[RMDB]
RNA sequence: GGGAACGACUCGAGUAGAGUCGAAAAGGUGUGUGGUCAGAAGUGCUUUCAUCUGGCAGGCUGGAGAUCCAAGCCCAACUUGGCCACUCACCAGAUGGUUUGUAACUUGGGCAGAUUAUCGAGCAGGCGGUGGGGUAAGAUUCGUCUUACCCCACCGAAAAGAAACAACAACAACAAC
Reactivity to DMS in 0.01 (KOAc 150mM, MgCl2 10mM, bicine 150mM(pH8.5), 24C), signal-to-noise 1, nucleotides 027 to 126: g020g000u000g010u000g000u010g000g030u000c000a050g020a150a200g000u000g000c050u000u020u010c070a030u000c040u000g000g030c070a090g000g040c170u010g000g020a090g050a050u000c070c060a020a060g000c050c070c060a070a180c060u000u000g030g000c020c020a010c000u000c110a010c010c010a060g010a100u010g010g000u000u000u000g000u000a040a040c110u000u000g000g010g040c040a020g000a080u000u000a030u000c040g000a130g000c090a050g000g030